[RMDB]
RNA sequence: GGGAACGACUCGAGUAGAGUCGAAAAUGCCAUAUGUAUGCAGUUCAGUAAUAGAGGCAUGGUCGCUAUGGCCAAUGCCGGUCCUGAUACGAACAAAUCACAGGUGCACCUUCGUUCCUUGGACCUUCACGCAGACAGUGCUGACCAUACUCGAUUAGACGUGAAAGGGAUUCGUCCCUUUCACGUCAAAAGAAACAACAACAACAAC
Reactivity to 2A3 in 0.01 (KOAc 150mM, MgCl2 10mM, bicine 150mM(pH8.5), 24C), signal-to-noise 2, nucleotides 027 to 156: u160g020c020c020a080u060a000u170g040u100a030u070g040c020a020g000u060u000c000a010g030u130a030a210u190a230g090a040g020g000c000a000u000g000g000u070c110g060c210u230a240u300g010g000c000c040a170a240u020g000c000c000g000g000u140c030c040u000g010a020u030a160c150g050a080a020c070a060a060a030u150c050a060c010a030g000g070u080g020c000a050c000c060u000u020c000g000u000u040c000c000u000u000g080g010a010c000c000u070u110c150a110c110g020c000a010g010a030c020a000g120u020g140c020u050g000a000c000c000a000u010a030c000u000c000g130a070u290u080a040